[RMDB]
RNA sequence: GGGAACGACUCGAGUAGAGUCGAAAACUGGAAGUUUCGAGGCGACGUACUUUACACAAUUGUCCUGGACGUGCGCGAGGAGCAGAGGAGAUCUCACCAACACUCCAUCUAUGUCUAACAGAAGUGACUUGACCGCACACAUUAUUUACUUGUUAACCGCAUAGCUACUGUUCGCAGUAGCUAUGCGAAAAGAAACAACAACAACAAC
Reactivity to 2A3 in 0.01 (KOAc 150mM, MgCl2 10mM, bicine 150mM(pH8.5), 24C), signal-to-noise 2, nucleotides 027 to 156: c070u010g050g020a090a050g050u000u070u120c060g020a050g010g010c000g000a070c020g050u020a070c050u060u220u170a090c110a030c000a080a230u110u060g030u030c000c010u040g020g080a010c050g060u040g040c010g000c030g040a080g000g000a000g010c040a020g000a040g040g020a070g010a020u000c020u030c130a070c040c000a020a060c050a040c040u020c000c010a070u000c000u010a060u070g090u060c090u080a040a020c050a060g150a300a030g070u010g030a020c000u050u070g030a020c000c070g020c000a000c010a000c000a060u000u090a090u030u300u090a080c020u050u020g030u050u000a030a060c030